[RMDB]
RNA sequence: GGGAACGACUCGAGUAGAGUCGAAAACCAUAACAGUUCGCUGUUAUGGACUGUCGGAAUGCGGAAUAAUUAAUCGUCCGCUUUCGAUUAAUACCGACUAUAAAGCGUAACACUUCGGUGUUACGAAGUUAGAGUUAUCGUUCGCGAUAACUCUAACAAAAGAAACAACAACAACAAC
Reactivity to DMS in 0.01 (KOAc 150mM, MgCl2 10mM, bicine 150mM(pH8.5), 24C), signal-to-noise 4, nucleotides 027 to 126: c010c000a020u000a000a000c010a000g020u000u010c230g040c000u000g010u000u000a000u000g000g010a090c210u010g010u000c010g000g000a010a030u010g010c000g000g000a020a020u000a050a140u010u000a100a080u000c290g000u000c000c020g010c010u000u000u000c000g000a000u000u010a080a110u010a190c030c010g010a110c220u000a120u010a080a120a110g000c000g000u000a000a000c000a000c000u000u010c210g020g020u000g010u010u000a000c000g010a000a030
Reactivity to 2A3 in 0.01 (KOAc 150mM, MgCl2 10mM, bicine 150mM(pH8.5), 24C), signal-to-noise 5, nucleotides 027 to 126: c010c000a000u000a010a000c010a010g030u070u090c130g060c130u000g000u000u000a010u010g000g030a050c050u070g010u000c000g000g040a020a050u230g000c010g000g050a020a040u120a140a140u250u220a080a130u160c110g020u000c000c000g000c000u000u000u000c000g000a000u000u030a010a010u050a050c010c020g060a000c050u100a090u110a300a120a010g110c010g000u000a000a000c000a000c010u020u090c220g080g000u000g000u000u000a000c000g000a020a000